Chemical mapping of a 177-nucleotide RNA with 2A3 and DMS. Source: RMDB library RFMREP, as collected in RNAgym. Conditions: 150 mM KOAc, 10 mM MgCl2 and 150 mM bicine (pH 8.5), 24 C. Reactivities are rounded to 0.1 and cut off at 0 and 3. For 2A3, 970 sequencing reads were counted. 2A3 adducts were read by reverse transcription with SuperScript II with manganese.
RNA sequence: GGGAACGACUCGAGUAGAGUCGAAAAUUCUAAGGAACACAACAUUGAUUAAUCUCAUUUUUGGAUCUCGUGGCAAGGCCUCUGUGCUUGCGCAUGCCUUGCCACACAGUGUCAUUGGGCUUACACUACUCGAAGAUACGUUCGCGUAUCUUCGAGUAAAAGAAACAACAACAACAAC
Reactivity to 2A3 in 0.01 (KOAc 150mM, MgCl2 10mM, bicine 150mM(pH8.5), 24C), signal-to-noise 1, nucleotides 027 to 126: u050u000c030u050a080a070g090g040a150a040c070a020c000a120a010c010a080u020u030g020a010u090u160a040a050u040c050u010c070a130u080u020u140u140u210g100g000a020u010c020u030c200g000u000g000g000c010a000a000g000g020c000c020u020c000u000g000u000g000c030u100u060g010c010g000c000a000u140g000c000c000u010u000g000c000c000a000c010a000c000a000g010u020g000u000c000a010u060u150g030g000g020c010u050u010a000c050a010c070u040
Reactivity to DMS in 0.01 (KOAc 150mM, MgCl2 10mM, bicine 150mM(pH8.5), 24C), signal-to-noise 1, nucleotides 027 to 126: u010u010c040u030a060a180g000g010a030a020c050a080c210a060a080c030a110u010u000g000a120u000u040a060a030u000c170u030c050a060u030u000u010u020u000g020g000a060u000c070u010c040g030u000g050g010c000a020a020g010g000c010c000u010c000u000g000u000g000c010u010u000g010c010g030c000a000u010g000c020c000u010u000g000c010c000a000c000a000c080a010g010u010g000u000c060a160u010u010g010g020g010c060u010u000a040c070a140c050u000